[RMDB]
The record gives the reactivity of an RNA of 177 nucleotides to DMS. The RNA was probed in 150 mM KOAc, 10 mM MgCl2 and 150 mM bicine (pH 8.5) at 24 C. It was measured as part of the RMDB library TTRINS. For DMS, 1,148 sequencing reads were counted.
RNA sequence: GGGAACGACUCGAGUAGAGUCGAAAAGAUAUGGAAACAGUGGAGUUCCUUUGCUGUGACCCAGAGGCAUGUCGGAAACGACAUGCCUCUGCACAGCAAAGGAACGAUGAAACUGUUUCCUAAGUCACAUGAUACACCAGUUCGCUGGUGUAUCAUGAAAAGAAACAACAACAACAAC
Reactivity to DMS in 0.01 (KOAc 150mM, MgCl2 10mM, bicine 150mM(pH8.5), 24C), signal-to-noise 1, nucleotides 027 to 126: g020a080u000a300u010g010g000a000a000a000c010a010g020u000g020g000a020g000u000u000c000c010u000u000u000g000c000u000g030u000g000a190c250c210c120a000g020a010g000g010c020a020u000g010u000c000g000g020a120a100a250c000g000a010c000a020u000g000c000c000u000c000u000g030c000a000c010a000g000c000a000a060a010g000g020a010a010c000g020a030u000g010a150a160a040c000u000g010u000u000u000c000c000u030a010a110g010u000c020a300